Background
Conditions: 150 mM KOAc, 10 mM MgCl2 and 150 mM bicine (pH 8.5), 24 C. This 177-nucleotide RNA was probed chemically with DMS and 2A3.

[RMDB]
RNA sequence: GGGAACGACUCGAGUAGAGUCGAAAAGAUAUGGACAUGAGCAACAGCCUGACAGUCGGAAACGACUGCAGGACAUGCGAGUGUCCUAAGUCAAACUACUACAUAACGUUCGCGUUAUGUAGUAGAACCGAUUAAUGGUGUUCGCACCAUUAAUCGGAAAAGAAACAACAACAACAAC
Reactivity to DMS in 0.01 (KOAc 150mM, MgCl2 10mM, bicine 150mM(pH8.5), 24C), signal-to-noise 3, nucleotides 027 to 126: g000a030u010a230u010g010g010a030c000a010u000g000a300g010c000a060a070c290a120g010c000c000u010g000a140c000a000g020u000c000g000g000a070a070a250c010g020a000c000u010g020c000a000g020g030a050c120a060u000g010c000g010a300g010u000g020u000c000c000u000a020a060g000u000c020a100a100a190c010u000a000c000u000a000c000a000u000a000a000c000g040u000u020c240g000c020g010u000u010a010u000g000u000a000g000u000a000g010a000a100
Reactivity to 2A3 in 0.01 (KOAc 150mM, MgCl2 10mM, bicine 150mM(pH8.5), 24C), signal-to-noise 3, nucleotides 027 to 126: g030a030u030a020u090g000g000a000c000a010u040g010a040g000c000a020a260c080a160g090c000c010u110g150a270c000a010g010u010c010g000g000a040a010a040c010g000a000c000u010g010c000a000g000g040a020c030a020u040g000c010g010a000g010u010g000u000c010c010u000a040a000g020u030c060a090a110a070c000u010a000c010u000a000c010a020u000a010a000c000g020u020u050c290g000c000g220u000u000a000u010g000u010a000g010u000a000g000a010a000

For 2A3, 5,588 sequencing reads were counted.
For DMS, 1,665 sequencing reads were counted.
The data come from the RNA Mapping Database (RMDB), library TTRDEL.
For 2A3 the reverse transcriptase was SuperScript II with manganese.